[RMDB]
RNA sequence: GGGAACGACUCGAGUAGAGUCGAAAAGGCGCCCCGAGGGGGGUCAUCUGGCAAAGAGAGGAGGAAUUUCGGAAGGAAUUCUCCCAAGAAGGUCCAAGAGAACUUUCAAGAAGGAGGAUUUUUCCCCAUGGAGGAGAGUUCGCUCUCCUCAAAAGAAACAACAACAACAAC
Reactivity to DMS in 0.01 (KOAc 150mM, MgCl2 10mM, bicine 150mM(pH8.5), 24C), signal-to-noise 5, nucleotides 027 to 129: g020g030c100g020c130c070c100c070g020a080g040g040g010g030g060g070u020c020a010u050c030u000g000g010c070a060a070a070g020a080g020a060g050g000a040g020g030a030a030u020u070u000c040g010g050a010a040g000g020a030a040u010u010c030u000c000c000c000a060a070g020a000a000g030g030u050c060c080a060a120g030a070g030a050a030c040u030u030u060c050a070a050g010a070a100g000g010a000g010g000a050u020u000u000u010u010c010c010c000c130a100u050g030
Reactivity to 2A3 in 0.01 (KOAc 150mM, MgCl2 10mM, bicine 150mM(pH8.5), 24C), signal-to-noise 6, nucleotides 027 to 129: g020g000c030g070c020c000c010c010g030a090g020g030g000g000g020g000u000c010a030u020c030u070g040g000c050a030a090a000g050a010g010a030g020g000a010g010g040a020a030u040u090u080c040g020g010a030a020g020g010a010a010u080u030c030u020c020c010c010a020a030g010a000a010g020g000u030c030c030a050a010g040a000g000a050a020c010u030u080u060c060a020a020g030a030a030g050g010a010g020g010a030u080u030u000u000u020c010c000c000c010a060u160g070

This 170-nucleotide RNA was probed chemically with DMS and 2A3. It was measured as part of the RMDB library 15KLIB. For DMS, 16,790 sequencing reads were counted. For DMS the reverse transcriptase was MarathonRT. Conditions: 150 mM KOAc, 10 mM MgCl2 and 150 mM bicine (pH 8.5), 24 C.